This 207-nucleotide RNA was probed chemically with 2A3 and DMS. The DMS profile rests on 2,627 reads. The reactions ran in a buffer of 150 mM KOAc, 10 mM MgCl2 and 150 mM bicine (pH 8.5), at 24 C.

RNA sequence: GGGAACGACUCGAGUAGAGUCGAAAACUGCGGCACCGGCUGCCCCGGUUUGGCGCGCCAACGCGGAGCCCGCUCGGCGUCUUCGGGACCAUGAACAGCGCGUACAGCGACUGCGACGUGCUGGGGAACUACGCGUCGUACAGCGCGCUUCGGCGCCCAAGCUCUCUCAAUUCGUUGAGAGAGCUUGAAAAGAAACAACAACAACAAC
Reactivity to 2A3 in 0.01 (KOAc 150mM, MgCl2 10mM, bicine 150mM(pH8.5), 24C), signal-to-noise 2, nucleotides 027 to 156: c030u010g000c000g010g000c040a070c150c110g200g020c060u050g030c010c000c000c000g030g010u060u050u040g030g000c020g030c010g000c020c040a120a020c100g000c030g040g010a030g040c060c070c010g010c020u030c020g030g000c010g040u000c040u120u140c070g010g050g030a020c000c000a050u120g140a140a040c000a010g000c000g000c000g030u070a100c070a070g030c020g180a230c220u260g020c050g020a000c000g020u030g020c010u020g020g000g010g010a030a040c010u050a020c090g000c010g010u010c000g010u070a090c080a080g020c010g000c000g010c000u000u010c000g040g000c010g000c000c010
Reactivity to DMS in 0.01 (KOAc 150mM, MgCl2 10mM, bicine 150mM(pH8.5), 24C), signal-to-noise 1, nucleotides 027 to 156: c050u000g020c110g030g030c050a070c030c150g030g070c060u010g000c050c050c000c010g040g010u020u020u000g000g030c030g000c010g010c050c030a070a080c090g020c020g030g000a200g030c010c020c020g060c030u000c010g020g020c020g050u010c030u000u000c100g010g000g000a290c020c020a140u010g000a140a160c040a030g010c000g040c000g010u000a160c060a140g030c090g020a100c050u000g020c030g010a080c000g030u000g040c000u000g030g020g020g030a180a150c030u010a070c090g000c000g020u020c040g000u010a110c040a080g040c000g010c030g000c030u000u000c080g030g000c020g000c010c020